An RNA of 177 nucleotides, treated with DMS and 2A3 and read out base by base. It was measured as part of the RMDB library OK2TRN. The RNA was probed in 150 mM KOAc, 10 mM MgCl2 and 150 mM bicine (pH 8.5) at 24 C.
[RMDB]
RNA sequence: GGGAACGACUCGAGUAGAGUCGAAAAUACGCGUACGUACGCGGCGCUAUAAUUAGCUAUAUAAUAUGCGCAUAUGCGCAUCGUAAUGCAUCGAUUACGUACGAUUAAUCGCGAUAUUAGCCGAUGCAGCUUUUGCACGUUUCGACGUGCAAAAGCUAAAAGAAACAACAACAACAAC
Reactivity to DMS in 0.01 (KOAc 150mM, MgCl2 10mM, bicine 150mM(pH8.5), 24C), signal-to-noise 2, nucleotides 027 to 126: u010a070c120g020c000g050u000a100c040g010u010a010c060g000c030g010g000c070g010c050u000a060u010a140a120u010u000a050g010c120u020a140u000a060u000a090a060u000a020u000g010c010g050c010a300u010a070u020g000c010g010c020a020u000c100g000u040a050a090u020g010c020a020u000c000g000a170u000u000a120c020g020u000a010c020g000a170u000u010a060a140u000c010g020c030g000a160u000a050u010u000a070g000c080c030g020a100u000g000c130
Reactivity to 2A3 in 0.01 (KOAc 150mM, MgCl2 10mM, bicine 150mM(pH8.5), 24C), signal-to-noise 1, nucleotides 027 to 126: u080a000c050g000c010g030u030a040c010g010u020a010c020g000c000g000g000c030g000c020u070a080u050a150a190u220u050a020g020c000u040a020u000a000u040a290a110u090a030u000g010c000g000c000a020u050a070u300g000c030g000c000a000u040c040g070u050a020a070u160g000c010a040u020c000g000a030u030u070a040c010g000u010a010c000g020a000u050u090a000a060u170c010g000c010g000a060u020a020u130u100a040g030c000c010g040a060u050g000c050